[RMDB]
RNA sequence: GGGAACGACUCGAGUAGAGUCGAAAAGUAACUUGUUCGCAAGUUACAAAAAACCUUUGUGUUGAUGGUCUGCUUUGAUCAGGACGGAUCCCAUUGGGAUCUACCUGGGAGCAGCUACAUCAACACUCUGGUAAAAAUCGAGUGUUCGCACUCGAAAGAUUGCAGCUCAGUUCGCUGAGCUGCAAUCAAAAGAAACAACAACAACAAC
Reactivity to 2A3 in 0.01 (KOAc 150mM, MgCl2 10mM, bicine 150mM(pH8.5), 24C), signal-to-noise 2, nucleotides 027 to 156: g000u000a010a010c000u000u010g020u110u100c190g000c110a000a000g000u000u000a000c010a030a130a020a000a000a000c020c000u020u000u000g030u020g000u020u000g000a000u030g020g070u040c000u020g020c000u190u070u100g170a150u140c000a000g060g100a170c180g000g000a000u000c020c000c030a300u250u300g000g000g000a000u000c000u000a010c000c000u000g000g040g010a000g000c010a000g010c000u030a070c020a020u000c000a000a000c000a000c000u000c000u000g040g000u110a070a130a000a000a020u040c010g000a010g010u010g030u080u120c230g040c220a000c010u000c180g020a010a040a020
This 207-nucleotide RNA was probed chemically with 2A3.
Conditions: 150 mM KOAc, 10 mM MgCl2 and 150 mM bicine (pH 8.5), 24 C.
The 2A3 profile rests on 954 reads.